[RMDB]
RNA sequence: GGGAACGACUCGAGUAGAGUCGAAAAGAUAUGGACCGUGAUAGCUAGCUUCCGGAUCGGAAACGAUCCGGGAGCUUGGACCUAUACGGUCCUAAGUCAAAACGGCAGAGUCUUCGGACUCUGCCGACCAAUCAUAUCAGUUCGCUGAUAUGAUUGGAAAAGAAACAACAACAACAAC
Reactivity to DMS in 0.01 (KOAc 150mM, MgCl2 10mM, bicine 150mM(pH8.5), 24C), signal-to-noise 5, nucleotides 027 to 126: g010a020u000a270u010g010g000a010c010c010g020u000g020a030u000a020g010c060u010a030g020c000u000u000c000c000g020g000a010u000c010g000g010a060a050a120c000g010a010u000c000c010g000g000g010a000g010c000u000u000g010g000a090c300c010u000a030u030a020c010g010g010u000c000c000u000a010a070g000u000c010a080a110a140a270c040g010g010c000a010g010a020g010u000c000u000u010c240g030g000a020c000u000c000u000g020c000c000g000a020
Reactivity to 2A3 in 0.01 (KOAc 150mM, MgCl2 10mM, bicine 150mM(pH8.5), 24C), signal-to-noise 3, nucleotides 027 to 126: g010a000u040a010u090g000g000a000c000c020g010u050g170a050u040a040g030c100u010a010g010c020u010u000c000c000g000g010a010u000c010g020g020a110a040a040c010g000a000u000c040c030g000g020g000a000g030c000u010u030g020g030a000c000c000u020a030u000a030c010g000g000u010c000c000u000a010a000g010u000c010a000a030a100a150c020g000g020c010a020g000a000g010u020c010u160u270c300g040g000a020c010u000c000u000g000c000c000g000a000
An RNA of 177 nucleotides, treated with DMS and 2A3 and read out base by base. The RNA was probed in 150 mM KOAc, 10 mM MgCl2 and 150 mM bicine (pH 8.5) at 24 C. For 2A3 the reverse transcriptase was SuperScript II with manganese. In probing experiments dimethyl sulfate is read out at A N1 and C N3, which are open when not base-paired.